[RMDB]
RNA sequence: GGGAACGACUCGAGUAGAGUCGAAAAAGUUGCUGCAGAUUUCCGGGUGUUCGAAACUUUCCCAGGCACUUGGAAUAAGGUUGCAUUGGGACUAGCCACGGCGCCUAACUUAACCAGCGAGCAAACAUAUGGGGUAAAUGUUCGCAUUUACCCCAUAAAAAGAAACAACAACAACAAC
Reactivity to DMS in 0.01 (KOAc 150mM, MgCl2 10mM, bicine 150mM(pH8.5), 24C), signal-to-noise 1, nucleotides 027 to 126: a110g000u000u000g010c060u000g000c050a180g020a140u010u000u020c150c030g000g000g010u000g000u020u040c050g010a040a090a290c100u000u000u010c000c000c010a070g000g000c000a020c000u000u010g020g030a200a050u010a030a050g030g010u010u030g010c010a090u000u000g000g000g010a060c160u010a070g040c010c090a250c160g050g000c060g010c000c000u000a030a050c110u010u000a040a080c230c060a090g010c010g020a050g030c060a090a010a060c160a150